[RMDB]
RNA sequence: GGGAACGACUCGAGUAGAGUCGAAAAAAUACCGGAAUCAUCGAUUUAUUUGAAAAUCAUGUGGAUAGUAUACCCACCAUAUUACCUCAUCAGUUAGCCACACUAGAUUAUCUAGUUAGAACUAUCAUACAGUCCAAUACUUCGGUAUUGGACUGUAAAAAGAAACAACAACAACAAC
Reactivity to 2A3 in 0.01 (KOAc 150mM, MgCl2 10mM, bicine 150mM(pH8.5), 24C), signal-to-noise 3, nucleotides 027 to 126: a000a010u160a020c020c030g000g010a060a060u030c000a000u030c070g010a020u000u040u060a240u100u180u300g260a100a060a000a000u010c040a010u040g010u010g020g060a080u040a060g030u010a010u040a140c010c010c010a000c050c040a050u040a070u130u120a100c000c030u080c030a270u030c020a040g060u040u080a000g000c030c000a070c000a030c050u010a000g050a230u060u190a150u230c020u010a030g000u050u000a000g040a150a010c030u050a030u070c010a000
Reactivity to DMS in 0.01 (KOAc 150mM, MgCl2 10mM, bicine 150mM(pH8.5), 24C), signal-to-noise 2, nucleotides 027 to 126: a040a120u000a000c020c060g020g020a300a190u030c030a070u000c090g000a000u000u000u010a030u050u030u040g000a030a000a020a030u020c000a030u000g000u000g000g000a300u000a030g000u000a020u030a110c120c000c000a150c110c070a070u020a000u010u010a040c040c000u010c010a040u010c070a060g000u000u000a010g000c130c040a040c070a070c010u010a000g000a220u010u000a110u030c000u000a000g010u000u000a080g000a030a260c030u000a010u000c080a110
Record summary
Structure probing data (2A3 and DMS) for a 177-nucleotide construct. The RNA was probed in 150 mM KOAc, 10 mM MgCl2 and 150 mM bicine (pH 8.5) at 24 C.